[RMDB]
RNA sequence: GGGAACGACUCGAGUAGAGUCGAAAAGAUAUGGAGCUCACGACAUGCUCCUUCGGAAACGAGCGAGCAACAGCGUGGAGCUCCUAAGUCAAAGAAAACGACAGUCGUUCGCGACUGUCGUUUUCAACGACUCAUUCUUCUUCGGAAGAAUGAGUCGAAAAGAAACAACAACAACAAC
Reactivity to DMS in 0.01 (KOAc 150mM, MgCl2 10mM, bicine 150mM(pH8.5), 24C), signal-to-noise 2, nucleotides 027 to 126: g010a050u000a240u010g000g020a020g010c000u000c060a020c020g000a070c060a270u000g020c010u010c000c010u000u000c000g010g010a110a080a140c010g000a040g020c300g000a010g010c000a040a150c240a110g030c040g000u000g010g010a010g010c000u010c000c000u000a000a040g020u010c020a150a070a140g030a000a000a030a000c010g020a000c010a000g000u010c010g040u000u020c290g040c000g030a020c010u000g000u000c000g000u000u000u000u000c030a050a110

The record gives the reactivity of an RNA of 177 nucleotides to DMS.
Values cover nucleotides 27 to 126.
For DMS the reverse transcriptase was MarathonRT.
The data come from the RNA Mapping Database (RMDB), library TTRDEL.
For DMS, 908 sequencing reads were counted.